[RMDB]
RNA sequence: GGGAACGACUCGAGUAGAGUCGAAAAAUAAAUAACGCGAAGAAGCAGAGAAAGGACUGCAAGAACGCGAAAACACCAACGUCAAGAACAGCAGGAAGGAGCUGAAAUAGACGAAACACCAAAAAAAGCUUCAAUUAAGAUUCGUCUUAAUUGAAGCAAAAGAAACAACAACAACAAC
Reactivity to DMS in 0.01 (KOAc 150mM, MgCl2 10mM, bicine 150mM(pH8.5), 24C), signal-to-noise 2, nucleotides 027 to 126: a130u010a040a040a120u010a090a090c020g020c010g000a100a060g020a100a210g040c020a040g000a150g000a030a150a040g000g050a160c000u000g020c000a030a120g000a100a050c020g000c000g000a060a010a040a100c120a130c080c030a060a070c060g010u000c030a090a200g020a110a200c000a030g010c030a050g010g010a130a100g030g020a040g010c000u000g010a050a050a070u010a130g000a010c030g010a050a080a100c150a030c100c120a000a000a090a070a060a070a040
Reactivity to 2A3 in 0.01 (KOAc 150mM, MgCl2 10mM, bicine 150mM(pH8.5), 24C), signal-to-noise 1, nucleotides 027 to 126: a000u060a000a030a000u120a060a050c010g010c020g040a280a070g060a070a040g020c030a000g010a000g130a110a160a110g090g120a030c000u000g000c040a130a050g050a060a000c000g000c000g130a050a040a050a000c050a020c010c030a000a090c010g010u000c010a030a050g030a210a160c000a000g050c000a000g080g120a170a040g020g030a030g040c010u020g000a040a010a050u030a010g030a020c010g010a000a060a000c070a020c040c080a040a030a000a020a000a000a030
Structure probing data (DMS and 2A3) for a 177-nucleotide construct.
2A3 adducts were read by reverse transcription with SuperScript II with manganese.
For 2A3, 1,048 sequencing reads were counted.
The RNA was probed in 150 mM KOAc, 10 mM MgCl2 and 150 mM bicine (pH 8.5) at 24 C.